Structure probing data (DMS) for a 177-nucleotide construct. High DMS reactivity at an A or C suggests that its Watson-Crick edge is free.
RNA sequence: GGGAACGACUCGAGUAGAGUCGAAAAGGCGGGGUGCUGAAGCCGUCAAUCUGGCCGUCUAUGUCGAUCGUCAGCGGCAGCGGCGCAGCGGGAAUGGUGAAGCCCGGGAUCGUGAAUCCCAGCGUGCAGCUACUAGCCCUUUCGAGGGCUAGUAGCUAAAAGAAACAACAACAACAAC
Reactivity to DMS in 0.01 (KOAc 150mM, MgCl2 10mM, bicine 150mM(pH8.5), 24C), signal-to-noise 1, nucleotides 027 to 126: g000g010c030g000g010g020g000u000g020c010u000g000a130a190g020c000c000g000u010c060a230a060u010c030u000g000g040c000c030g010u020c040u000a110u000g010u010c080g000a060u000c260g000u000c090a060g000c030g030g020c070a080g000c030g000g000c040g040c070a030g000c190g000g000g010a110a070u000g000g030u000g020a230a140g010c040c060c050g010g000g020a040u020c020g000u010g010a110a120u000c030c000c000a130g000c110g010u020g010c100

Values cover nucleotides 27 to 126.